[RMDB]
RNA sequence: GGGAACGACUCGAGUAGAGUCGAAAACAAAAGAUUGAGGACGGCUGUGCUGGCACCCACCAGGGUCGUUGCUGCUGAGAUGUCUGAGGCCCUGAGAGGACUUCCCAUUCGGUACCAAACCUCAGCAUCCUAGCCAACGUUUCGACGUUGGCUAGGAAAAAGAAACAACAACAACAAC
Reactivity to DMS in 0.01 (KOAc 150mM, MgCl2 10mM, bicine 150mM(pH8.5), 24C), signal-to-noise 1, nucleotides 027 to 126: c010a060a140a080a070g000a040u000u020g000a140g000g010a060c200g080g000c000u000g020u060g030c020u000g020g000c070a080c030c020c120a240c060c020a190g060g000g000u000c000g000u010u010g030c050u000g000c030u060g000a170g000a030u000g000u070c000u050g000a210g020g000c120c020c030u140g030a000g000a140g040g000a190c180u060u060c030c000c020a110u000u030c040g000g030u000a080c190c120a120a080a020c050c000u000c000a110g050c050a250
Reactivity to 2A3 in 0.01 (KOAc 150mM, MgCl2 10mM, bicine 150mM(pH8.5), 24C), signal-to-noise 1, nucleotides 027 to 126: c070a020a110a070a020g170a070u110u070g070a020g070g000a030c030g020g010c030u060g000u140g070c000u020g050g060c000a030c000c030c000a010c000c000a010g090g000g060u020c020g060u010u020g030c010u010g000c000u060g020a020g010a070u100g020u110c040u050g020a130g060g000c010c000c010u000g030a020g100a050g010g040a090c000u080u060c000c000c000a020u080u040c100g060g020u070a060c090c090a060a080a060c050c000u080c000a020g000c000a080

Record summary
Source: RMDB library OK1LIB, as collected in RNAgym. Chemical mapping of a 177-nucleotide RNA with DMS and 2A3. The reactions ran in a buffer of 150 mM KOAc, 10 mM MgCl2 and 150 mM bicine (pH 8.5), at 24 C.